[RMDB]
RNA sequence: GGGAACGACUCGAGUAGAGUCGAAAAGAUAUGGAGAAGCGUUAAAAAUAGCGAAGAACACACUCACAGCACAUCGGAAACGAUGUGUCACAGGUGUGGGAGCUAUAAUAACGCUUCUCCUAAGUCAUCACCUAAUGUGGUUCGCCACAUUAGGUGAAAAAGAAACAACAACAACAAC
Reactivity to DMS in 0.01 (KOAc 150mM, MgCl2 10mM, bicine 150mM(pH8.5), 24C), signal-to-noise 2, nucleotides 027 to 126: g000a030u000a300u020g010g000a050g090a010a010g000c000g070u000u000a000a050a070a110a030u000a000g010c000g010a020a160g000a080a190c000a000c000a010c020u000c110a250c300a300g000c000a000c010a020u000c000g000g000a140a180a130c060g000a000u010g000u000g000u000c040a070c260a090g000g050u000g000u000g010g000g000a020g000c000u000a020u020a060a300u000a000a000c000g000c020u000u000c000u000c000c000u020a030a110g000u000c040a200
An RNA of 177 nucleotides, treated with DMS and read out base by base. For DMS, 1,004 sequencing reads were counted. The data come from the RNA Mapping Database (RMDB), library TTRINS.